[RMDB]
RNA sequence: GGGAACGACUCGAGUAGAGUCGAAAAAGAAAUCGACGCAAGCGAAGAUAAAAGCGGAACGGUAACCGCAAUACCGUACGGUCAUGGCACGCGAAAGCGAAAGACCGAAACAUGGCAUACAAAAAAAGAUUUCACAUUAGUUCGCUAAUGUGAAAUCAAAAGAAACAACAACAACAAC
Reactivity to DMS in 0.01 (KOAc 150mM, MgCl2 10mM, bicine 150mM(pH8.5), 24C), signal-to-noise 2, nucleotides 027 to 126: a120g010a040a090a040u000c080g000a150c070g040c040a060a030g010c060g000a030a110g010a090u000a020a060a070a130g000c010g000g000a070a080c070g000g000u000a020a060c060c020g030c110a060a070u000a080c010c010g020u010a170c000g000g000u010c030a070u000g020g000c140a110c000g000c030g000a070a100a150g020c020g020a120a080a090g030a010c020c000g000a040a080a080c080a040u010g000g000c040a060u000a040c080a010a010a040a050a060a050a100
Reactivity to 2A3 in 0.01 (KOAc 150mM, MgCl2 10mM, bicine 150mM(pH8.5), 24C), signal-to-noise 2, nucleotides 027 to 126: a000g110a020a060a010u020c010g050a020c010g020c130a040a040g050c040g050a040a020g040a090u120a080a120a000a000g060c050g000g040a010a000c010g000g050u050a090a070c020c020g000c050a010a010u030a050c000c020g020u030a030c020g000g010u030c000a060u110g040g000c100a030c160g000c010g040a080a020a000g000c010g000a100a000a030g030a010c000c030g010a010a010a000c050a030u080g050g000c030a040u120a100c100a120a140a030a030a000a000a000